Chemical mapping of a 207-nucleotide RNA with 2A3 and DMS. Values cover nucleotides 27 to 156. DMS adducts were read by reverse transcription with MarathonRT. The RNA was probed in 150 mM KOAc, 10 mM MgCl2 and 150 mM bicine (pH 8.5) at 24 C.
RNA sequence: GGGAACGACUCGAGUAGAGUCGAAAAACUAAUCCAAAGCAAGUAUAGGAGAACAGGUUUUUAACUAUUUUUAGGCAGAUAAAACAUAGUAUUUGACAGUCUAACACUAACUGAACAAUAAGUGUUAAAAAGUCGUCUCUGUUCGCAGAGACGACAAUCUCACAGUUAGGUUCGCCUAACUGUGAGAAAAAGAAACAACAACAACAAC
Reactivity to 2A3 in 0.01 (KOAc 150mM, MgCl2 10mM, bicine 150mM(pH8.5), 24C), signal-to-noise 3, nucleotides 027 to 156: a000c040u070a080a030u030c000c000a030a010a020g000c010a000a010g020u050a050u060a100g030g020a030g020a080a070c130a200g080g020u040u010u000u000u040a050a010c020u020a040u060u030u010u020u050a020g060g040c080a040g020a090u050a030a000a040a000c040a010u020a010g020u010a050u040u040u030g020a010c000a000g000u010c000u000a000a000c000a000c000u000a000a000c000u000g030a030a000c000a000a020u020a030a000g000u000g010u010u030a040a090a010a010a000g000u000c000g000u000c000u000c000u010g060u060u030c120g000c060a000g000a000g000a000c000g000a000c000a000a010
Reactivity to DMS in 0.01 (KOAc 150mM, MgCl2 10mM, bicine 150mM(pH8.5), 24C), signal-to-noise 1, nucleotides 027 to 156: a260c050u000a180a210u000c050c020a080a070a280g010c030a060a080g040u000a080u020a190g020g010a090g040a110a230c080a110g010g000u000u000u000u000u000a020a110c010u000a080u010u010u010u000u010a050g020g000c050a110g000a120u000a020a040a040a040c070a050u030a050g000u000a050u030u020u010g000a160c010a060g000u000c030u000a020a020c030a000c010u000a030a120c000u010g000a170a160c290a050a040u000a050a020g000u000g020u000u020a050a030a040a090a110g000u000c000g020u000c010u010c000u000g000u000u020c300g000c020a020g000a020g010a000c000g030a010c000a010a030